[RMDB]
RNA sequence: GGGAACGACUCGAGUAGAGUCGAAAAUCAUUAGACUGUUCGCAGUCUAAUGAAAAAAGAUAUGGAGUGGUUGGGAGCUCGGAUUCGGAAACGAAUCCUGAGCGAAGAACAACCCACUCCUAAGUCAAAAACUAAAACUAGUUCGCUAGUUUUAGAACAUAACUCGAUAGUUCGCUAUCGAGUUAUGAAAAGAAACAACAACAACAAC
Reactivity to 2A3 in 0.01 (KOAc 150mM, MgCl2 10mM, bicine 150mM(pH8.5), 24C), signal-to-noise 2, nucleotides 027 to 156: u030c000a010u000u000a010g000a000c010u010g060u080u110c280g000c120a000g000u000c000u010a000a000u000g000a020a010a000a000a010a010g020a010u020a010u030g000g000a000g010u010g020g020u010u000g000g000g000a000g000c000u010c000g000g000a000u000u000c000g000g000a000a000a000c000g000a000a000u000c000c010u020g000a000g000c000g030a220a000g000a000a000c000a000a000c010c030c000a020c000u000c000c000u000a000a000g000u000c000a010a000a020a010a240c000u020a000a010a000a000c000u000a000g030u070u070c250g010c150u000a000g000u020u010u000u000a010g010a070a010
Reactivity to DMS in 0.01 (KOAc 150mM, MgCl2 10mM, bicine 150mM(pH8.5), 24C), signal-to-noise 1, nucleotides 027 to 156: u010c010a000u010u000a010g010a030c000u000g040u000u010c300g060c000a020g000u000c010u000a010a000u000g010a000a040a060a150a140a220g000a030u000a020u000g000g010a040g060u000g010g010u000u000g010g000g020a090g050c010u000c000g020g010a030u000u010c000g020g000a040a010a060c010g020a010a000u000c000c000u020g030a010g020c000g000a020a120g000a170a300c020a030a030c160c090c060a020c000u000c000c000u000a000a070g000u010c010a150a100a070a130a190c010u010a000a000a020a010c000u010a010g010u000u000c300g030c000u000a010g010u000u000u000u010a000g010a130a200
This 207-nucleotide RNA was probed chemically with 2A3 and DMS.
The reactions ran in a buffer of 150 mM KOAc, 10 mM MgCl2 and 150 mM bicine (pH 8.5), at 24 C.
For 2A3, 3,483 sequencing reads were counted.
Source: RMDB library RNAMAK, as collected in RNAgym.